RNA sequence: GGGAACGACUCGAGUAGAGUCGAAAAACGCUGACGUACGCGUCAGCGAGUGGAUGAUGAGUAGUCGGAAGGCUGAGCUGAUGAUGAAGGACGCCCAUGUCUGAUCAGAGGUGCUACGGCACCUCAAGUUGCCAGCCAUAUUCGUAUGGCUGGCAACAAAAGAAACAACAACAACAAC
Reactivity to DMS in 0.01 (KOAc 150mM, MgCl2 10mM, bicine 150mM(pH8.5), 24C), signal-to-noise 1, nucleotides 027 to 126: a110c040g030c000u000g010a000c040g010u000a040c300g010c000g000u000c000a060g030c000g010a030g000u000g000g000a010u060g000a100u000g000a170g020u000a070g010u000c020g030g000a100a140g030g000c000u000g040a060g000c090u030g030a060u010g000a050u010g000a160a150g000g000a040c070g030c040c000c010a160u040g010u000c010u030g030a050u000c050a060g020a010g000g000u000g030c030u000a110c200g010g000c000a000c020c020u010c040a030a080
Reactivity to 2A3 in 0.01 (KOAc 150mM, MgCl2 10mM, bicine 150mM(pH8.5), 24C), signal-to-noise 1, nucleotides 027 to 126: a000c010g020c000u000g010a000c000g050u130a000c280g020c010g190u000c010a000g020c000g000a060g000u100g060g000a110u100g000a040u070g010a000g080u040a000g010u110c040g000g000a110a000g110g020c040u030g020a020g030c030u050g010a160u040g010a070u080g180a130a080g010g000a000c000g020c000c010c010a020u030g000u010c080u090g050a110u060c020a010g000a000g000g000u000g000c030u030a030c270g050g000c020a000c000c010u000c000a000a000